[RMDB]
RNA sequence: GGGAACGACUCGAGUAGAGUCGAAAACUCUCAGGCUCAGAUUCACAGCCUCCCCAUGGCAAAUGGAGGCCUUCCAGGGUCCUGGACCCACCCCCAAGCUUGGGUAGGAGGGAUCCCCCUCUUAAUAAUUACGGUAAAUAUUCGUAUUUACCGUAAUAAAAGAAACAACAACAACAAC
Reactivity to 2A3 in 0.01 (KOAc 150mM, MgCl2 10mM, bicine 150mM(pH8.5), 24C), signal-to-noise 6, nucleotides 027 to 126: c020u000c000u000c010a010g070g000c010u020c070a060g030a300u240u120c070a110c020a170g020c000c000u000c020c000c000c010a120u120g140g000c060a060a110a120u110g010g010a030g020g020c000c010u100u010c020c020a040g040g020g040u070c040c150u080g060g050a030c010c000c010a070c010c010c010c000c010a030a010g050c050u070u050g020g010g000u030a040g010g060a010g040g040g020a070u040c050c010c010c010c000u000c000u080u100a170a130u140a060
Reactivity to DMS in 0.01 (KOAc 150mM, MgCl2 10mM, bicine 150mM(pH8.5), 24C), signal-to-noise 9, nucleotides 027 to 126: c110u000c020u000c020a060g000g000c020u000c130a100g010a130u010u010c090a120c220a190g010c000c010u000c030c030c120c060a080u000g010g000c120a090a110a110u000g000g000a040g010g000c070c070u000u010c050c050a090g000g000g010u010c050c060u000g020g010a070c030c010c020a300c040c010c000c010c020a110a100g000c060u000u000g000g000g010u000a030g000g000a040g000g000g000a060u010c030c020c010c030c020u000c010u000u000a070a100u000a110